[RMDB]
RNA sequence: GGGAACGACUCGAGUAGAGUCGAAAAGCACCUGGGUUCGCCCAGGUGCAAAGAUCAGUAGCAUGCAAGAUCAAAUCCGAAAGGAUGCUACAGGGAAACCAAAAAGCCAGUGCUUCGGCACUGGCAACAUAACGUACUGCUUCGGCAGUACGUUAUGAAAAGAAACAACAACAACAAC
Reactivity to DMS in 0.01 (KOAc 150mM, MgCl2 10mM, bicine 150mM(pH8.5), 24C), signal-to-noise 3, nucleotides 027 to 126: g020c020a000c000c000u000g010g000g010u000u000c200g040c000c000c000a010g020g010u000g010c000a000a020a060g000a110u000c050a120g030u000a000g010c000a030u010g020c150a200a090g000a020u000c080a090a200a190u000c010c030g000a070a060a120g010g010a010u000g000c020u000a000c040a190g020g000g000a110a060a110c020c030a100a090a120a150a090g000c000c000a000g040u000g020c010u010u010c220g010g000c000a000c000u000g000g000c000a000a020
Reactivity to 2A3 in 0.01 (KOAc 150mM, MgCl2 10mM, bicine 150mM(pH8.5), 24C), signal-to-noise 3, nucleotides 027 to 126: g000c000a010c010c000u000g030g020g000u030u080c200g100c040c000c000a000g010g000u000g000c000a010a000a000g000a030u080c020a010g020u020a000g020c010a000u150g050c050a110a080g010a150u080c040a090a130a050u020c020c040g110a080a040a010g030g010a010u020g000c000u010a010c010a010g050g040g030a050a080a060c030c000a060a040a020a010a000g000c000c000a000g000u000g000c020u060u140c220g080g000c000a010c000u010g000g000c000a010a010

Structure probing data (DMS and 2A3) for a 177-nucleotide construct. Reactivities are given for positions 27 through 126. 2A3 adducts were read by reverse transcription with SuperScript II with manganese. The RNA was probed in 150 mM KOAc, 10 mM MgCl2 and 150 mM bicine (pH 8.5) at 24 C.